An RNA of 177 nucleotides, treated with 2A3 and read out base by base. Conditions: 150 mM KOAc, 10 mM MgCl2 and 150 mM bicine (pH 8.5), 24 C. It was measured as part of the RMDB library RFM100. For 2A3 the reverse transcriptase was SuperScript II with manganese.

[RMDB]
RNA sequence: GGGAACGACUCGAGUAGAGUCGAAAAUCUCAAUGUUGUUUUACUUAUACCAUGAUGUAGCAUCUGUGUGGCCUCGCGGUCGCUCAGUUCUAGUUGUAAACUUGGGCUUUUGCCUGGGUGAGCUACGAUCCACUUGACACUUCGGUGUCAAGUGGAUAAAAGAAACAACAACAACAAC
Reactivity to 2A3 in 0.01 (KOAc 150mM, MgCl2 10mM, bicine 150mM(pH8.5), 24C), signal-to-noise 1, nucleotides 027 to 126: u040c000u020c000a080a160u040g000u000u000g030u000u000u000u020a090c000u080u170a020u040a240c100c100a260u220g000a170u220g060u000a000g000c000a000u050c120u040g000u000g000u000g000g000c020c020u040c120g060c210g110g000u010c000g000c000u000c040a040g000u110u070c000u060a210g200u050u110g150u110a000a000a000c000u050u050g110g000g010c000u300u300u100u300g000c000c060u000g020g000g020u000g000a140g000c000u000a000c040g000